RNA sequence: GGGAACGACUCGAGUAGAGUCGAAAAUACCGCAGGCCUGCGGUGCGGCAGUGUGGAGACCUGCCGUAAGCCGUGUUGUUUUGACAACCGGGAGAGAGCGUAUGCGGAGGCAGCGCUUUCAGGGUCUAAAAGUAUGGGAUCUUCGGAUCCCAUACAACAUCAGUGCUUUGUUCGCAAAGCACUGAUGAAAAGAAACAACAACAACAAC
Reactivity to 2A3 in 0.01 (KOAc 150mM, MgCl2 10mM, bicine 150mM(pH8.5), 24C), signal-to-noise 2, nucleotides 027 to 156: u070a000c000c010g010c010a010g010g030c000c030u040g000c010g000g000u000g000c000g010g000c000a000g000u060g010u120g300g090a080g030a090c000c000u000g010c000c000g010u000a000a000g030c020c010g100u130g010u180u010g020u000u160u080u240g110a020c000a010a020c010c000g000g000g000a010g000a000g000a000g000c010g000u050a300u190g020c040g020g120a060g250g000c010a000g000c000g010c040u010u000u000c000a000g000g000g000u000c000u010a040a050a000a090g010u000a010u000g000g000g000a000u000c010u010u050c130g080g000a000u000c040c000c000a000u000a000c000a000a010